Overview:
Chemical mapping of a 207-nucleotide RNA with 2A3 and DMS. 2A3 is a SHAPE reagent: it acylates the 2'-hydroxyl of flexible nucleotides of all four kinds. The DMS profile rests on 8,122 reads. The reactions ran in a buffer of 150 mM KOAc, 10 mM MgCl2 and 150 mM bicine (pH 8.5), at 24 C.

RNA sequence: GGGAACGACUCGAGUAGAGUCGAAAAAUCAGGCAGACCGACGCUCCGGCCUCGCCGUCUAAGGAGUAGGCAUGCACGCUGAUACCGCAUCCGGGCGGUGGAGCGAACUGGACUCGGAUCGACAGACUUUCAUCACUCGAUGCGAAAAGUACAGCGCCCAUGUUAUACAAUUCGUUGUAUAACAUGGAAAAGAAACAACAACAACAAC
Reactivity to 2A3 in 0.01 (KOAc 150mM, MgCl2 10mM, bicine 150mM(pH8.5), 24C), signal-to-noise 8, nucleotides 027 to 156: a000u110c040a030g040g040c020a010g050a100c000c030g030a040c100g030c070u020c020c020g040g010c000c020u060c060g040c040c020g020u020c040u080a140a130g010g020a030g010u110a050g070g010c050a040u140g050c050a030c110g030c020u040g010a090u040a080c010c020g020c040a030u010c080c050g010g010g000c020g000g000u020g070g010a010g010c070g020a070a060c010u030g000g030a020c020u020c080g100g070a180u050c020g020a020c020a030g040a030c010u050u100u050c090a050u020c010a030c070u030c030g020a020u050g010c000g030a120a050a020a030g060u080a070c020a030g030c030g050c020
Reactivity to DMS in 0.01 (KOAc 150mM, MgCl2 10mM, bicine 150mM(pH8.5), 24C), signal-to-noise 3, nucleotides 027 to 156: a080u000c040a060g050g010c010a100g000a140c030c000g000a110c130g000c080u000c030c020g030g010c030c020u010c090g010c030c020g000u010c040u000a110a240g050g010a190g000u000a110g010g030c030a090u010g000c050a100c070g020c130u000g000a220u000a050c020c000g000c070a140u010c070c030g030g010g020c010g000g040u000g010g000a000g020c020g010a070a080c000u000g000g010a130c020u000c040g010g010a100u010c020g030a100c040a130g000a100c040u000u000u000c060a080u000c030a090c020u000c030g010a040u000g010c070g000a050a060a080a110g010u010a080c000a060g000c020g010c110